[RMDB]
RNA sequence: GGGAACGACUCGAGUAGAGUCGAAAAGGGAAUGGUGGUUUACCCCGUUAUCAAAUGAUUACCGACCAAUACUUGGCGAAACUCGUUUCGCGUUGGCUGCCUAAUUCAAGGAAUUAGCGUGCCUUCAAAGACAUCAAGAAGUUCGCUUCUUGAUGAACAUAAUAUAUGGCUUCGGCCAUAUAUUAUGAAAAGAAACAACAACAACAAC
Reactivity to 2A3 in 0.01 (KOAc 150mM, MgCl2 10mM, bicine 150mM(pH8.5), 24C), signal-to-noise 7, nucleotides 027 to 156: g040g010g010a080a110u140g020g020u050g010g050u050u070u230a150c030c020c000c010g090u080u090a090u100c080a080a100a130u180g040a040u060u090a030c010c040g070a060c030c020a060a030u110a150c060u080u150g060g000c010g000a030a030a040c060u040c090g060u020u010u000c010g010c010g010u010u020g000g010c030u070g020c020c020u010a000a010u020u010c110a160a090g180g020a070a020u010u000a010g020c050g070u030g000c010c000u000u000c030a060a080a020g080a040c010a000u010c000a000a000g000a010a000g010u040u160c220g020c120u000u010c000u000u000g000a000u000g000a010a000
Reactivity to DMS in 0.01 (KOAc 150mM, MgCl2 10mM, bicine 150mM(pH8.5), 24C), signal-to-noise 4, nucleotides 027 to 156: g010g020g020a050a050u020g020g020u000g000g010u010u000u010a110c030c010c000c020g040u000u000a100u000c120a080a100a120u010g010a120u000u000a050c000c030g020a080c020c010a060a110u000a080c150u000u000g020g010c030g000a090a040a030c050u010c120g020u000u000u000c000g030c040g020u010u000g010g010c030u000g020c110c020u000a020a020u000u000c030a150a140g040g010a070a050u000u000a030g030c060g010u010g000c020c010u000u000c050a070a070a140g000a170c000a010u000c000a000a020g010a030a030g010u000u010c300g030c020u000u000c000u000u000g010a010u000g000a060a120
Source: RMDB library M2RFPK, as collected in RNAgym. Structure probing data (2A3 and DMS) for a 207-nucleotide construct. The reactions ran in a buffer of 150 mM KOAc, 10 mM MgCl2 and 150 mM bicine (pH 8.5), at 24 C. For DMS, 12,029 sequencing reads were counted. Reactivities are given for positions 27 through 156. 2A3 adducts were read by reverse transcription with SuperScript II with manganese.